[RMDB]
RNA sequence: GGGAACGACUCGAGUAGAGUCGAAAAGUGCCUGAGCUGGUCGACGUCCAGCUCCCUCGGGACCACGCUGCUCUGGGCGGAAGAGUCUUCUGACACUUCUAGCCUAUUCAGCUUCGCGUCCUUGAGGCCUGGCGUAACGCGGCUCUUGCCACCUGGCCCAUAGGGCCCAGUUCGCUGGGCCCUAUGGAAAAGAAACAACAACAACAAC
Reactivity to 2A3 in 0.01 (KOAc 150mM, MgCl2 10mM, bicine 150mM(pH8.5), 24C), signal-to-noise 4, nucleotides 027 to 156: g070u070g010c000c000u000g010a000g000c000u010g010g040u210c020g020a020c010g070u130c020c010a010g010c020u300c010c000c010u000c000g000g010g010a000c000c010a020c080g000c000u000g000c000u010c000u000g000g000g010c010g000g000a000a000g030a010g000u030c040u280u170c220u300g030a010c020a020c040u010u010c010u040a170g000c010c000u010a000u060u130c000a010g000c000u010u030c050g020c090g010u020c000c020u030u300g010a000g010g000c010c000u000g000g000c000g000u000a020a000c010g000c000g050g010c000u000c000u000u020g020c040c000a040c000c020u040g090g000c010

An RNA of 207 nucleotides, treated with 2A3 and read out base by base. The 2A3 profile rests on 3,519 reads. Conditions: 150 mM KOAc, 10 mM MgCl2 and 150 mM bicine (pH 8.5), 24 C. Reactivities are rounded to 0.1 and cut off at 0 and 3. 2A3 adducts were read by reverse transcription with SuperScript II with manganese.